[RMDB]
RNA sequence: GGGAACGACUCGAGUAGAGUCGAAAAAUGGGCACGUGCACACUCAUGUGCAGAUCGUUGCCCUCACGCUGGAACACGGGGUGCUGCUGCAUCAUCACUUCGAUGUACAAAUCUCCUGCAGGUCCACACUGCUUGGACACUUCGGUGUCCAAGCAGUAAAAGAAACAACAACAACAAC
Reactivity to DMS in 0.01 (KOAc 150mM, MgCl2 10mM, bicine 150mM(pH8.5), 24C), signal-to-noise 3, nucleotides 027 to 126: a020u000g010g000g010c000a020c020g050u000g000c000a040c000a140c300u000c300a100u010g000u020g000c000a080g040a090u020c010g000u000u000g020c000c000c000u000c110a020c160g020c110u000g010g000a060a070c030a150c070g000g000g010g000u010g000c300u000g000c110u030g000c050a050u010c000a060u010c160a170c210u020u000c130g000a030u000g000u010a080c080a020a030a170u000c060u000c030c030u010g030c050a100g010g020u010c020c030a080c210
Reactivity to 2A3 in 0.01 (KOAc 150mM, MgCl2 10mM, bicine 150mM(pH8.5), 24C), signal-to-noise 2, nucleotides 027 to 126: a000u090g000g000g000c000a000c010g020u040g040c020a010c010a020c080u300c100a190u250g010u000g030c010a000g020a120u210c010g050u120u080g000c020c030c010u020c030a030c030g080c030u050g030g020a070a030c040a000c070g020g000g040g000u030g000c000u010g040c040u020g000c000a020u030c010a000u040c020a090c110u150u130c110g040a050u010g000u030a010c040a010a090a030u010c020u040c010c000u020g000c000a050g010g010u000c000c000a010c010
An RNA of 177 nucleotides, treated with DMS and 2A3 and read out base by base. For DMS, 1,402 sequencing reads were counted. The RNA was probed in 150 mM KOAc, 10 mM MgCl2 and 150 mM bicine (pH 8.5) at 24 C.